The data come from the RNA Mapping Database (RMDB), library M2PK50.
Structure probing data (DMS and 2A3) for a 177-nucleotide construct.

[RMDB]
RNA sequence: GGGAACGACUCGAGUAGAGUCGAAAACGCGAACUGUUCGCAGUUCGCGAAAUAACAAAGAACAGCUAACCUACUGCGAUAAGCCCUAGCUAAGUAGGUAAAAAAGAGGAAAGUUCGCUUUCCUCAACAAUCUUAGUGGGUUCGCCCACUAAGAUUGAAAAGAAACAACAACAACAAC
Reactivity to DMS in 0.01 (KOAc 150mM, MgCl2 10mM, bicine 150mM(pH8.5), 24C), signal-to-noise 3, nucleotides 027 to 126: c010g000c010g010a010a020c000u000g010u000u000c200g020c000a020g000u000u010c000g000c000g010a010a020a020u020a080a080c160a060a100a110g000a110a110c130a100g020c120u000a110a040c010c010u000a020c000u010g020c020g000a170u000a110a120g000c000c000c000u000a240g010c010u000a050a010g020u000a000g020g010u000a000a030a060a060a040a010g030a010g000g000a020a000a010g010u000u000c240g000c000u000u010u010c000c000u000c010a050a090
Reactivity to 2A3 in 0.01 (KOAc 150mM, MgCl2 10mM, bicine 150mM(pH8.5), 24C), signal-to-noise 1, nucleotides 027 to 126: c000g000c000g010a000a000c000u000g030u090u080c220g000c090a010g000u000u000c000g010c010g000a000a000a010u040a030a010c050a010a130a040g130a140a010c040a040g070c050u110a040a090c000c000u000a000c020u020g010c010g020a030u070a170a030g020c010c010c020u020a000g000c010u000a000a060g010u000a000g040g000u030a010a060a010a000a000a030g020a000g030g010a010a000a030g020u120u150c150g020c130u000u000u000c000c010u000c000a000a020
For 2A3 the reverse transcriptase was SuperScript II with manganese. For 2A3, 2,234 sequencing reads were counted.